[RMDB]
RNA sequence: GGGAACGACUCGAGUAGAGUCGAAAAGCGUGCACACACUCCCCUCCUCCCUCCUCCCUGGGUUCACCCAGGUUGCACCAGGUUGGAAUGGAGCAAAGAGGGCCACACUGGGAAGGACCAGCACGGGACGCACGGGUAUAUUCGUAUACCCGUGCGUAAAAGAAACAACAACAACAAC
Reactivity to DMS in 0.01 (KOAc 150mM, MgCl2 10mM, bicine 150mM(pH8.5), 24C), signal-to-noise 3, nucleotides 027 to 126: g030c040g030u010g000c020a080c110a050c120a290c040u000c030c010c000c060u000c090c070u000c010c000c010u000c000c040u000c100c010c010u000g000g010g000u000u010c300a110c000c010c010a020g000g020u010u000g010c060a200c010c020a030g010g000u020u030g030g020a160a120u000g010g010a070g050c100a010a060a100g010a060g010g000g000c240c120a050c200a120c140u000g010g030g000a060a070g030g000a030c020c040a240g000c030a050c030g010g000g000